[RMDB]
RNA sequence: GGGAACGACUCGAGUAGAGUCGAAAAUCAGGCUUCGGCCUGAGAAAGGCGUACUACUUCCUGGGAGUGCCAUUCUACCCACCUGUGUCCCAAAUAGGACACAGAGGAAUGUGCACGAAGAACAGGAAGUAUCGCAUGAGUUACACUUCGGUGUAAACUAAAAUUGGCUUUUCGAAGCCAAUUUUAGAAAAGAAACAACAACAACAAC
Reactivity to DMS in 0.01 (KOAc 150mM, MgCl2 10mM, bicine 150mM(pH8.5), 24C), signal-to-noise 2, nucleotides 027 to 156: u000c000a030g020g010c010u000u010c230g040g000c010c020u000g000a010g000a040a090a080g000g000c030g010u000a080c110u000a010c000u010u010c000c000u000g010g000g010a260g020u000g000c010c000a020u000u000c000u000a020c010c000c020a300c120c000u000g010u000g020u010c000c000c050a060a210a220u000a100g000g000a020c000a010c000a000g000a040g010g000a020a020u000g000u010g070c000a000c000g000a040a180g030a190a190c000a010g000g010a020a010g000u000a000u000c000g000c010a100u000g010a200g020u010u010a000c040a010c020u000u010c300g060g050u000g020u010a020a020a180
Reactivity to 2A3 in 0.01 (KOAc 150mM, MgCl2 10mM, bicine 150mM(pH8.5), 24C), signal-to-noise 3, nucleotides 027 to 156: u030c000a010g010g000c000u060u130c240g170g000c010c010u000g000a010g000a040a130a030g070g010c030g020u120a120c090u000a000c000u000u000c000c010u070g020g020g030a050g020u000g010c000c000a000u000u000c020u070a160c060c040c020a030c000c010u000g000u000g010u000c020c000c000a130a250a080u290a070g000g010a000c010a000c000a000g020a010g010g020a000a000u040g160u300g000c000a000c020g060a060a020g080a010a000c000a030g010g050a010a000g000u000a000u140c000g000c010a000u100g070a050g040u040u010a000c010a000c020u110u240c300g080g000u000g020u030a020a030a020
Conditions: 150 mM KOAc, 10 mM MgCl2 and 150 mM bicine (pH 8.5), 24 C. An RNA of 207 nucleotides, treated with DMS and 2A3 and read out base by base. The DMS profile rests on 4,611 reads. For 2A3 the reverse transcriptase was SuperScript II with manganese. Source: RMDB library RNAMAK, as collected in RNAgym.